The record gives the reactivity of an RNA of 177 nucleotides to DMS.
The RNA was probed in 150 mM KOAc, 10 mM MgCl2 and 150 mM bicine (pH 8.5) at 24 C.
Values are in units of 0.01, from 0 to 300, in steps of 10.
For DMS, 1,254 sequencing reads were counted.
It was measured as part of the RMDB library M2PK90.
RNA sequence: GGGAACGACUCGAGUAGAGUCGAAAAAUUGAUGCGAAGGGGGGACGGAGAAGGCUAUGUUGGCCGGGCGACGGUAGUCCCGGUUUAAGCGUGUAGGCUGGUUUUCCAGGCAAAUCCGGAAAUUGAAGUGUGUAAACUACUUCGGUAGUUUACACACAAAAGAAACAACAACAACAAC
Reactivity to DMS in 0.01 (KOAc 150mM, MgCl2 10mM, bicine 150mM(pH8.5), 24C), signal-to-noise 2, nucleotides 027 to 126: a120u000u000g000a060u030g010c050g020a040a080g030g000g010g000g010g020a070c110g030g000a150g000a100a080g030g000c030u010a050u000g000u010u010g000g000c030c040g000g000g020c300g020a070c150g030g010u020a130g020u010c000c020c000g000g010u000u000u000a080a080g020c020g020u000g020u030a050g000g010c030u020g010g010u000u020u020u000c000c010a140g020g020c070a050a010a070u010c020c010g000g000a050a020a070u000u010g000a090a150